[RMDB]
RNA sequence: GGGAACGACUCGAGUAGAGUCGAAAAAAAAUGAGUGCGUGGUAGCACAAACCAGACCAAUCUUCGGCACAUGGUCGCACAAGUACAGCUUCGCCUGUACAAAGGGAACAACAACAACAACAAGCAACAACACUUUAAGAUUCGUCUUAAAGUGUUGAAAAGAAACAACAACAACAAC
Reactivity to 2A3 in 0.01 (KOAc 150mM, MgCl2 10mM, bicine 150mM(pH8.5), 24C), signal-to-noise 5, nucleotides 027 to 126: a000a000a010a010u140g000a020g000u020g000c040g010u080g050g090u140a060g050c020a010c010a050a050a000c010c010a020g040a020c020c000a030a110u080c070u130u100c090g060g000c040a040c020a150u060g030g000u030c040g020c020a050c020a120a070g010u010a010c000a000g000c010u120u130c100g040c050c010u000g010u010a000c000a010a040a010g010g010g010a000a010c000a000a010c000a000a000c000a000a000c000a020a010c020a030a010g130c010a010a060
Reactivity to DMS in 0.01 (KOAc 150mM, MgCl2 10mM, bicine 150mM(pH8.5), 24C), signal-to-noise 6, nucleotides 027 to 126: a030a010a090a050u000g000a140g030u000g010c040g030u000g010g010u010a100g010c030a030c040a060a060a080c080c030a100g000a060c030c030a050a100u010c100u010u000c090g020g010c070a050c180a130u010g000g000u000c050g020c120a030c140a060a070g020u000a010c010a010g000c010u010u010c200g010c190c010u000g000u000a000c010a030a050a080g000g010g010a040a040c030a020a020c000a020a040c030a020a020c040a010a030c080a070a120g000c220a070a080